[RMDB]
RNA sequence: GGGAACGACUCGAGUAGAGUCGAAAAAAUGUUUGAAUGAAUCAUAUAUACCAUAUCAAGAGUAUUCAUCCGGUUGUGUAACCAGAAAUAUAAUGGAAUAAUGUAGGUAUUAUCACAUUAUUAAAGCUUUGAUAUGCUCAAGUAACUAUGGUAAUACCUCCAUAGCUCAAUUCGUUGAGCUAUGGAGAAAAGAAACAACAACAACAAC
Reactivity to DMS in 0.01 (KOAc 150mM, MgCl2 10mM, bicine 150mM(pH8.5), 24C), signal-to-noise 2, nucleotides 027 to 156: a140a120u000g010u000u000u000g010a080a150u000g000a140a100u020c030a080u000a060u000a190u010a260c040c030a060u010a060u000c010a060a190g020a120g060u000a050u000u010c060a140u000c020c010g000g040u000u000g090u010g010u000a080a090c010c000a040g000a040a100a130u000a070u000a020a060u000g000g000a080a050u000a030a050u000g000u000a110g040g000u000a000u000u000a030u000c020a050c030a010u000u000a020u000u000a110a060a120g020c010u010u000u010g030a100u000a040u000g020c030u000c040a070a190g020u000a030a070c110u000a050u000g000g010u000a030a060u000a030c110
Reactivity to 2A3 in 0.01 (KOAc 150mM, MgCl2 10mM, bicine 150mM(pH8.5), 24C), signal-to-noise 2, nucleotides 027 to 156: a010a000u120g030u070u060u050g080a090a080u010g020a040a020u090c030a020u080a050u070a000u000a150c000c030a020u040a020u070c060a090a030g040a020g070u040a050u070u030c030a060u030c070c030g010g020u010u040g120u050g100u120a000a010c000c000a010g060a020a100a000u230a000u030a040a060u050g010g020a020a020u010a030a020u040g070u080a070g020g080u080a040u060u050a020u040c040a010c000a020u000u030a000u000u090a120a100a000g000c020u090u050u060g030a050u050a020u120g000c010u000c070a100a060g000u020a060a050c100u000a030u030g000g000u010a060a000u010a050c000